An RNA of 177 nucleotides, treated with DMS and read out base by base. Conditions: 150 mM KOAc, 10 mM MgCl2 and 150 mM bicine (pH 8.5), 24 C. It was measured as part of the RMDB library M2PK50. For DMS the reverse transcriptase was MarathonRT. For DMS, 7,935 sequencing reads were counted.
[RMDB]
RNA sequence: GGGAACGACUCGAGUAGAGUCGAAAAACGCUACCUUUCGAGGUAGCGUCACCUACUUCGCGCUACCGUCGAGUCGUUCCCAUGGUUGCGUGAAGUAGUUUGAGUGGCAGACGUUCGCGUCUGCCAACAAGAAUGCUUCAUUCGUGAAGCAUUCUUGAAAAGAAACAACAACAACAAC
Reactivity to DMS in 0.01 (KOAc 150mM, MgCl2 10mM, bicine 150mM(pH8.5), 24C), signal-to-noise 3, nucleotides 027 to 126: a030c000g000c000u000a000c000c000u000u000u000c150g020a030g020g010u000a000g020c000g010u000c050a070c240c040u000a020c060u000u000c010g010c000g010c010u000a010c010c060g000u010c180g000a040g000u000c000g000u000u000c000c000c000a010u000g010g010u000u000g000c010g020u000g000a010a030g000u000a030g000u000u000u010g000a160g030u000g010g000c000a020g000a020c000g010u000u010c190g020c010g020u000c000u000g000c000c000a000a030